[RMDB]
RNA sequence: GGGAACGACUCGAGUAGAGUCGAAAAGAUAUGGACGUCCCUGACGCUUCCUACCCACCCCCAGACUGGACUCGGAAACGAGUCCAGUCUGGGGAGGGAAGAACUACGUUCGGGACGUCCUAAGUCAGUAUACACAAAAGUUCGCUUUUGUGUAUACAAAAGAAACAACAACAACAAC
Reactivity to DMS in 0.01 (KOAc 150mM, MgCl2 10mM, bicine 150mM(pH8.5), 24C), signal-to-noise 2, nucleotides 027 to 126: g000a120u000a300u000g000g010a020c000g000u020c000c010c000u020g030a010c010g000c170u010u000c020c000u000a290c040c050c050a220c180c000c000c000c000a000g000a040c000u000g000g000a040c010u000c000g010g010a100a080a290c010g010a000g010u000c010c020a000g000u000c000u010g000g000g000g020a010g000g000g000a130a070g010a080a060c110u010a130c000g010u000u000c300g010g000g000a010c000g000u000c000c000u000a010a040g010u010c090a130
Reactivity to 2A3 in 0.01 (KOAc 150mM, MgCl2 10mM, bicine 150mM(pH8.5), 24C), signal-to-noise 2, nucleotides 027 to 126: g050a080u190a200u300g010g000a010c010g000u010c020c010c000u010g000a000c010g000c070u050u040c000c050u110a300c000c030c020a100c010c000c020c010c000a000g040a000c030u000g040g000a000c000u000c020g080g060a080a130a090c010g050a010g010u000c010c000a010g050u030c000u000g020g010g000g010a010g020g010g000a000a010g010a080a030c170u280a030c250g030u050u060c000g010g030g000a020c000g010u000c000c000u010a000a000g010u030c010a000